[RMDB]
RNA sequence: GGGAACGACUCGAGUAGAGUCGAAAACAGACUGGAACUAUAGUGGGCAAGGCUUUGAAUGUGUAGUGUUCAAAAGUUUAGACUUCAUCCUUUAGAUCUUCAAGCCCAGUGCAAUGGCUCACACCUGUAAUCCCAGCACUUUGGGAACUGAAGCAGGGGACUGAGUUAUUUUCGAAUAACUCAGUCCAAAAGAAACAACAACAACAAC
Reactivity to 2A3 in 0.01 (KOAc 150mM, MgCl2 10mM, bicine 150mM(pH8.5), 24C), signal-to-noise 3, nucleotides 027 to 156: c020a020g060a020c020u130g010g050a030a030c020u040a110u070a270g020u010g030g020g000c060a060a020g090g010c080u050u010u050g020a050a040u040g060u050g020u150a140g050u070g070u110u080c010a070a030a080a060g040u100u140u130a070g000a080c010u070u050c060a070u090c020c020u100u130u140a040g000a130u090c000u060u020c010a050a020g000c020c010c020a010g010u030g000c040a010a130u130g050g000c020u040c020a050c010a050c040c010u030g060u070a040a050u040c010c000c000a000g060c020a050c030u180u190u070g000g000g020a020a010c060u050g020a040a000g020c020a040g060g030
Reactivity to DMS in 0.01 (KOAc 150mM, MgCl2 10mM, bicine 150mM(pH8.5), 24C), signal-to-noise 1, nucleotides 027 to 156: c040a090g010a180c030u000g010g000a150a090c000u000a060u000a060g010u010g010g070g050c030a170a100g000g000c020u040u050u010g030a100a050u010g010u000g030u000a110g010u010g020u000u000c020a020a050a050a110g010u000u010u000a140g010a150c010u000u000c040a230u010c030c010u010u010u010a080g000a090u000c040u000u000c020a120a090g080c000c010c000a110g070u040g020c050a050a090u000g040g020c080u000c090a120c090a050c060c010u000g010u000a060a050u010c010c000c010a120g000c060a040c050u000u000u010g000g010g000a040a130c090u000g000a040a080g010c110a070g000g030
Overview
Chemical mapping of a 207-nucleotide RNA with 2A3 and DMS. DMS adducts were read by reverse transcription with MarathonRT. Reactivities are given for positions 27 through 156. Values are in units of 0.01, from 0 to 300, in steps of 10. The 2A3 profile rests on 1,276 reads.